Structure probing data (2A3) for a 207-nucleotide construct. The data come from the RNA Mapping Database (RMDB), library OK3TST. Conditions: 150 mM KOAc, 10 mM MgCl2 and 150 mM bicine (pH 8.5), 24 C.

RNA sequence: GGGAACGACUCGAGUAGAGUCGAAAAAUAAUAGCAAACAAGGAAAGGCUAUCUAAAUUAGCCAUUAUGAAAGUUGAAAACAAUAAAUAUUCACGUUGUAUUAUAGACAACAGUUUAUACGAUAAUAACGUAGCAAAUAGCCACGUACAAUAUUAUCACAGCUUGAAAUGUUCGCAUUUCAAGCUGUAAAAGAAACAACAACAACAAC
Reactivity to 2A3 in 0.01 (KOAc 150mM, MgCl2 10mM, bicine 150mM(pH8.5), 24C), signal-to-noise 1, nucleotides 027 to 156: a000u050a000a010u010a000g030c020a060a000a090c000a000a000g050g000a000a020a020g000g000c000u000a030u000c090u050a130a090a090u060u030a050g010c020c070a030u060u120a050u230g080a060a020a040g000u030u000g110a030a100a030a000c040a030a020u160a150a100a020u150a150u130u300c040a010c100g000u000u000g050u010a040u050u050a160u300a090g150a180c000a050a000c030a020g000u000u110u000a040u080a070c050g000a000u000a010a010u000a040a000c000g010u000a040g000c000a190a270a140u050a050g020c060c000a000c000g000u010a000c000a070a130u010a010u080u010a000u000c040